[RMDB]
RNA sequence: GGGAACGACUCGAGUAGAGUCGAAAAGCAAUUACAGUGCUUCAUUUUGUGGAAGUACUGCCAUUAUCCUGCUGAAAGAAAAGCCGUGUUAAUCAUUUUUGAUUUUGCCUUUAUGAGGGUAAAAUCACUGAUACAGAAAAUUCGUUUUCUGUAUCAGAAAAGAAACAACAACAACAAC
Reactivity to DMS in 0.01 (KOAc 150mM, MgCl2 10mM, bicine 150mM(pH8.5), 24C), signal-to-noise 6, nucleotides 027 to 126: g010c130a020a030u020u010a170c010a000g010u000g010c000u000u000c010a060u020u020u020u030g030u040g010g010a020a010g020u000a000c000u000g020c100c110a040u000u000a080u000c020c020u000g010c030u000g000a090a090a110g000a080a090a120a080g000c050c120g010u010g010u000u010a100a120u040c070a110u010u000u000u010u010g000a010u000u000u000u000g000c000c000u000u000u030a110u040g020a100g000g000g020u000a000a000a000a000u000c010a110
Reactivity to 2A3 in 0.01 (KOAc 150mM, MgCl2 10mM, bicine 150mM(pH8.5), 24C), signal-to-noise 9, nucleotides 027 to 126: g020c010a010a020u060u020a040c000a010g000u000g010c000u000u000c020a180u060u190u220u300g300u300g140g010a000a000g000u000a000c000u010g000c010c010a020u050u050a040u060c000c010u020g020c030u050g100a120a150a090g090a050a120a080a000g030c040c060g070u050g050u120u100a140a080u090c080a140u040u090u080u080u060g000a000u000u000u000u020g000c000c010u120u130u070a160u290g250a180g030g000g000u010a000a000a000a000u000c000a000